Chemical mapping of a 177-nucleotide RNA with DMS and 2A3. As a SHAPE reagent, 2A3 marks flexible, mostly unpaired nucleotides at the ribose 2'-OH. Values cover nucleotides 27 to 126.
RNA sequence: GGGAACGACUCGAGUAGAGUCGAAAAAGACAUACGUUCGCGUAUGUCUGACGGGCACCUGACCCUAAGGAAAUCCUCUAUGACAGGACACACUGAUUGUGAUACCUCGAGAUUUCGAUCUCGAGAACAAGGUCAUCCUAUUCGUAGGAUGACCUUGAAAAGAAACAACAACAACAAC
Reactivity to DMS in 0.01 (KOAc 150mM, MgCl2 10mM, bicine 150mM(pH8.5), 24C), signal-to-noise 5, nucleotides 027 to 126: a000g000a010c000a010u000a000c000g030u000u010c220g030c000g020u000a000u000g010u000c000u000g000a120c200g010g000g000c140a070c020c020u000g010a300c030c010c000u010a090a100g000g000a050a090a120u000c020c010u010c070u010a060u010g010a090c050a020g010g010a180c110a060c040a040c140u020g010a110u010u000g020u000g010a170u000a090c200c000u000c000g010a010g000a020u000u000u010c190g000a010u000c000u000c000g000a010g000a070a110
Reactivity to 2A3 in 0.01 (KOAc 150mM, MgCl2 10mM, bicine 150mM(pH8.5), 24C), signal-to-noise 3, nucleotides 027 to 126: a000g000a010c000a010u010a000c000g010u020u090c300g000c010g090u000a000u000g010u010c000u000g010a010c010g000g010g000c070a070c050c020u070g220a300c000c000c020u030a030a040g040g000a040a030a070u060c010c020u000c040u070a120u120g070a040c000a030g010g070a030c000a000c000a000c080u120g120a270u180u110g050u040g090a090u120a160c000c000u000c000g000a000g000a000u040u080u150c220g060a000u010c010u000c000g010a000g000a000a010
DMS adducts were read by reverse transcription with MarathonRT.
The reactions ran in a buffer of 150 mM KOAc, 10 mM MgCl2 and 150 mM bicine (pH 8.5), at 24 C.
For 2A3, 3,317 sequencing reads were counted.